[RMDB]
RNA sequence: GGGAACGACUCGAGUAGAGUCGAAAAUUUAAACGAAACAAUGGAACGUUGACAAUAAGGUCUCGUCAUGGGGAGUUUGUCAUUAAGAACACAACUCAACUUGGGAUGAAGCCCUGUGCUGAUAGAGGACAGUUGAUGAGUUCGCUCAUCAACUGUCAAAAGAAACAACAACAACAAC
Reactivity to 2A3 in 0.01 (KOAc 150mM, MgCl2 10mM, bicine 150mM(pH8.5), 24C), signal-to-noise 1, nucleotides 027 to 126: u060u060u030a030a000a020c050g020a030a050a030c030a040a220u170g010g060a090a040c030g000u020u100g050a000c080a040a000u070a060a030g060g020u010c000u020c050g120u100c020a020u050g000g050g030g000a010g040u070u030u120g010u010c030a120u160u260a030a030g100a240a000c000a000c000a060a030c010u040c030a040a140c020u020u010g000g130g000a020u080g040a020a010g010c000c010c000u070g020u050g040c020u030g020a070u050a120g160a020g180
Reactivity to DMS in 0.01 (KOAc 150mM, MgCl2 10mM, bicine 150mM(pH8.5), 24C), signal-to-noise 3, nucleotides 027 to 126: u000u000u010a090a040a070c060g030a160a090a080c100a100a110u000g030g000a160a130c040g020u010u000g000a080c160a030a130u000a070a070g000g010u000c030u000c020g010u000c010a090u010g000g020g010g000a020g020u000u000u000g000u000c060a130u000u010a100a090g020a110a060c150a040c200a030a030c040u000c060a010a060c010u000u010g000g010g000a040u010g000a110a080g000c040c020c010u000g010u000g000c100u000g030a060u000a070g000a090g000
Structure probing data (2A3 and DMS) for a 177-nucleotide construct. The DMS profile rests on 1,480 reads. Conditions: 150 mM KOAc, 10 mM MgCl2 and 150 mM bicine (pH 8.5), 24 C. It was measured as part of the RMDB library OK2TRN. Reactivities are given for positions 27 through 126.